[RMDB]
RNA sequence: GGGAACGACUCGAGUAGAGUCGAAAAGCUGACGGAUAACGUGGUGUUAUAGAUAUAUAUUUUACGUCAUAAUAAUAUUAUAGCUCGCGAAAUAUAUAUAUCGUAGCUAAAUUAUUAUCGUCAGCGACAUAUCAGUAUAGUUCGCUAUACUGAUAUGAAAAGAAACAACAACAACAAC
Reactivity to DMS in 0.01 (KOAc 150mM, MgCl2 10mM, bicine 150mM(pH8.5), 24C), signal-to-noise 4, nucleotides 027 to 126: g020c000u000g010a010c000g020g010a030u000a010a010c300g010u000g010g010u000g020u000u000a040u000a080g000a050u010a030u000a010u000a020u000u000u000u000a040c000g010u000c000a030u010a050a040u000a040a080u020a300u000u000a020u000a060g010c160u010c050g040c000g000a000a030a040u000a040u000a030u000a050u000a040u000c060g020u000a040g000c010u000a080a060a070u000u000a050u000u000a040u000c010g010u000c000a010g010c010g000a120
Reactivity to 2A3 in 0.01 (KOAc 150mM, MgCl2 10mM, bicine 150mM(pH8.5), 24C), signal-to-noise 3, nucleotides 027 to 126: g000c010u010g000a010c020g100g050a020u000a060a000c030g020u040g010g040u050g040u080u090a090u130a230g010a010u020a000u000a000u000a050u110u020u020u080a040c000g000u000c010a020u030a130a000u150a120a040u110a100u250u090a090u100a060g020c050u060c120g020c020g030a020a060a000u100a020u000a000u010a010u010a020u060c010g010u000a010g000c000u020a020a060a000u080u060a030u020u020a030u050c000g000u000c000a000g010c000g010a000
Conditions: 150 mM KOAc, 10 mM MgCl2 and 150 mM bicine (pH 8.5), 24 C. Structure probing data (DMS and 2A3) for a 177-nucleotide construct. For 2A3, 3,759 sequencing reads were counted. Values are in units of 0.01, from 0 to 300, in steps of 10. For DMS, 3,365 sequencing reads were counted.